Source information:
Conditions: 150 mM KOAc, 10 mM MgCl2 and 150 mM bicine (pH 8.5), 24 C. Structure probing data (DMS and 2A3) for a 177-nucleotide construct. For 2A3 the reverse transcriptase was SuperScript II with manganese. Values cover nucleotides 27 to 126. High DMS reactivity at an A or C suggests that its Watson-Crick edge is free. It was measured as part of the RMDB library TTRDES.
RNA sequence: GGGAACGACUCGAGUAGAGUCGAAAAGAUAUGGAAUUGUACGAGGCUAUGAAGCAAGUCGGAAACGACUUGUGGAGCCUCGUACUGAUUCCUAAGUCAAAGCAGAUAUGCUUCGGCAUAUCUGCAACUUAAACACUUGGUUCGCCAAGUGUUUAAGAAAAGAAACAACAACAACAAC
Reactivity to DMS in 0.01 (KOAc 150mM, MgCl2 10mM, bicine 150mM(pH8.5), 24C), signal-to-noise 4, nucleotides 027 to 126: g000a020u000a200u010g000g000a020a140u010u000g010u010a000c010g000a030g010g020c000u000a270u020g000a140a290g010c010a000a000g010u000c000g020g010a040a040a110c000g010a020c000u000u000g000u000g000g000a010g010c000c000u000c010g010u000a000c000u020g010a060u000u000c000c000u000a030a140g000u000c020a100a160a170g010c000a010g000a010u000a010u000g000c000u000u010c300g030g010c000a000u000a000u000c000u000g020c010a010a040
Reactivity to 2A3 in 0.01 (KOAc 150mM, MgCl2 10mM, bicine 150mM(pH8.5), 24C), signal-to-noise 3, nucleotides 027 to 126: g000a000u040a020u080g010g000a000a010u080u020g000u000a000c000g000a010g000g000c020u050a090u300g000a000a000g010c000a000a000g000u000c010g000g020a030a000a010c000g010a000c000u000u010g000u020g000g010a000g020c020c020u000c000g000u000a000c010u010g000a000u040u010c000c000u000a010a000g000u000c020a080a070a080g000c000a000g010a000u000a000u000g010c000u070u160c300g230g020c000a010u000a000u010c000u020g000c000a000a000